The record gives the reactivity of an RNA of 207 nucleotides to 2A3. Conditions: 150 mM KOAc, 10 mM MgCl2 and 150 mM bicine (pH 8.5), 24 C. The data come from the RNA Mapping Database (RMDB), library OK3TST.

[RMDB]
RNA sequence: GGGAACGACUCGAGUAGAGUCGAAAAUGAACGGUUCGCUGACGGUGCGCAGCUCGAAGCCGCUUUCAGCGUCGGUGCGGCGGACGUGAGCCGCUUCGAUGACAUGGAAAUCAACACCACCUACGUCUCCAGCAUGGUCUAUCAGUCACCGAACAUCCACCAGUUCAACGUUCGCGUUGAACUGGUGAAAAGAAACAACAACAACAAC
Reactivity to 2A3 in 0.01 (KOAc 150mM, MgCl2 10mM, bicine 150mM(pH8.5), 24C), signal-to-noise 1, nucleotides 027 to 156: u150g000a060a010c050g030g000u050u060c010g040c030u000g030a010c010g220g050u070g000c120g010c010a020g010c000u060c140g060a070a020g000c010c020g000c000u000u020u020c130a120g000c030g000u000c000g010g030u100g000c000g000g000c050g050g090a130c140g110u230g000a000g000c000c030g000c000u080u040c010g030a040u110g000a070c010a090u050g020g060a030a000a120u070c000a040a040c010a020c100c000a040c000c000u010a000c060g080u060c000u020c040c010a030g000c000a100u140g010g000u000c030u130a110u130c050a030g070u110c000a000c010c000g050a080a020c030a040u000c040
2A3 adducts were read by reverse transcription with SuperScript II with manganese.